About this RNA:
The record gives the reactivity of an RNA of 207 nucleotides to 2A3 and DMS. For 2A3 the reverse transcriptase was SuperScript II with manganese.
RNA sequence: GGGAACGACUCGAGUAGAGUCGAAAAAGCAGGCCGACUUCCAAAUCGGGAUCCGACCUUUUGGAACGGCACCCCUUUCGGCAACCGCCCAGAAGGAUGCCGAGCCACGGACAUGUGAACACACCUUGGCAGACAGCCAUCAUGUGCACGGGAUACACAUACGGUCUAGGUUCGCCUAGACCGUAUGAAAAGAAACAACAACAACAAC
Reactivity to 2A3 in 0.01 (KOAc 150mM, MgCl2 10mM, bicine 150mM(pH8.5), 24C), signal-to-noise 2, nucleotides 027 to 156: a000g090c110a100g080g000c000c010g030a040c070u020u020c020c000a050a000a040u190c100g000g000g070a120u180c070c090g110a100c080c000u020u000u020u020g020g000a020a010c000g010g000c000a030c010c010c000c010u020u140u060c010g000g020c030a050a110c010c030g010c060c060c020a110g060a200a000g080g000a030u020g040c000c000g010a020g030c030c050a060c050g000g050a040c030a100u120g030u040g100a130a020c030a000c000a030c090c060u060u070g000g020c010a010g100a280c060a050g020c000c000a060u080c000a080u160g040u030g040c070a020c080g010g000g060a040u130a120c040a000
Reactivity to DMS in 0.01 (KOAc 150mM, MgCl2 10mM, bicine 150mM(pH8.5), 24C), signal-to-noise 2, nucleotides 027 to 156: a080g040c050a000g000g030c070c010g000a180c050u000u020c030c030a050a040a030u000c110g010g020g020a120u000c030c020g000a300c010c000u000u000u010u010g000g010a040a100c000g000g020c050a070c010c010c020c090u000u000u000c040g000g000c060a130a170c090c040g060c080c020c040a120g010a070a040g030g000a100u000g010c000c010g010a070g000c030c050a110c090g000g020a070c040a120u030g030u000g050a100a090c040a030c050a080c030c030u000u010g000g020c010a190g030a220c140a210g020c020c010a070u000c050a030u000g040u000g020c020a080c040g000g020g060a240u000a100c100a120
It was measured as part of the RMDB library OK3TST. The reactions ran in a buffer of 150 mM KOAc, 10 mM MgCl2 and 150 mM bicine (pH 8.5), at 24 C. Values cover nucleotides 27 to 156.